This 207-nucleotide RNA was probed chemically with 2A3 and DMS.
[RMDB]
RNA sequence: GGGAACGACUCGAGUAGAGUCGAAAAGACGCCUUUAGAAGAAGAGGAUAGGGGGUAUUCCGGUGUGGGAUACUUAGUAAUAUGCAACGCUAAUUGCAUAAGAUUGUAGGACGGAAUUUACAGUCUUUAGAGAUAAGCACGUUCGCGUGCUUAUCAACGGUAACUUAGACUUCGGUCUAAGUUACCGAAAAGAAACAACAACAACAAC
Reactivity to 2A3 in 0.01 (KOAc 150mM, MgCl2 10mM, bicine 150mM(pH8.5), 24C), signal-to-noise 4, nucleotides 027 to 156: g030a010c020g060c010c010u080u120u140a090g010a120a000g010a010a000g020a030g030g020a010u090a060g010g010g000g010g000u050a010u030u030c010c010g120g020u090g030u130g050g010g010a020u020a100c010u020u080a020g020u090a030a110u040a030u090g020c010a050a000c030g020c230u140a110a050u070u020g000c010a010u010a040a050g030a030u030u060g010u040a010g010g060a020c070g030g040a060a040u080u100u040a060c020a010g000u010c000u030u070u090a100g050a000g000a040u000a000a010g000c000a010c010g000u020u030c140g000c010g090u000g000c000u000u000a000u000c000a000a000
Reactivity to DMS in 0.01 (KOAc 150mM, MgCl2 10mM, bicine 150mM(pH8.5), 24C), signal-to-noise 1, nucleotides 027 to 156: g040a150c030g000c020c010u000u000u000a130g000a050a050g040a060a090g010a070g000g020a070u000a060g030g010g020g000g050u010a060u000u000c000c040g020g030u030g060u000g010g000g020a020u000a030c000u000u010a090g010u010a070a140u010a040u000g000c030a010a000c030g020c150u000a050a160u000u000g010c000a080u000a020a010g020a010u000u000g020u020a010g030g030a180c060g000g040a060a290u010u010u000a030c000a080g010u000c010u000u000u000a140g000a210g070a020u000a010a010g030c010a030c000g010u000u010c300g010c030g070u000g000c000u000u000a000u010c000a030a090

For 2A3 the reverse transcriptase was SuperScript II with manganese. It was measured as part of the RMDB library M2RFPK.